Chemical mapping of a 177-nucleotide RNA with DMS and 2A3.
For 2A3 the reverse transcriptase was SuperScript II with manganese.
For 2A3, 2,204 sequencing reads were counted.
Source: RMDB library RFMREP, as collected in RNAgym.
DMS (dimethyl sulfate) methylates the pairing face of unpaired adenines and cytosines.
Values cover nucleotides 27 to 126.
Conditions: 150 mM KOAc, 10 mM MgCl2 and 150 mM bicine (pH 8.5), 24 C.

RNA sequence: GGGAACGACUCGAGUAGAGUCGAAAACAGGGUACACACAAGAAGAGUAAUUGCACUGGAUUAGAAAUACUGGGGUGGGCCUCUUUUUAAUGUCCAGUGUCCUUUGUCUUAACAUUUGGUGCAAUGUGCUUAUCUUAAUGUUCGCAUUAAGAUAAGCAAAAGAAACAACAACAACAAC
Reactivity to DMS in 0.01 (KOAc 150mM, MgCl2 10mM, bicine 150mM(pH8.5), 24C), signal-to-noise 2, nucleotides 027 to 126: c060a080g010g010g020u020a070c070a090c090a080c110a070a070g000a030a120g010a080g010u000a090a070u000u000g000c010a010c010u010g000g000a030u000u000a190g010a070a060a050u000a030c050u000g010g010g000g000u000g000g000g020c070c030u000c000u000u000u020u020u030a070a090u030g000u000c030c020a040g010u000g030u010c060c020u000u040u000g000u000c080u000u020a040a150c130a030u000u020u000g000g010u020g000c060a050a030u000g020u000
Reactivity to 2A3 in 0.01 (KOAc 150mM, MgCl2 10mM, bicine 150mM(pH8.5), 24C), signal-to-noise 2, nucleotides 027 to 126: c030a030g050g000g060u160a040c050a010c000a000c010a100a060g080a090a020g020a030g080u090a110a070u080u050g000c000a000c010u010g030g000a010u080u030a100g090a090a060a040u130a080c040u050g000g050g030g070u040g010g000g020c020c040u100c000u150u240u050u040u280a080a020u150g000u030c010c000a000g020u020g040u080c030c010u050u090u100g060u000c030u020u070a070a060c020a070u000u000u090g000g030u020g030c030a050a060u100g020u030
For DMS the reverse transcriptase was MarathonRT.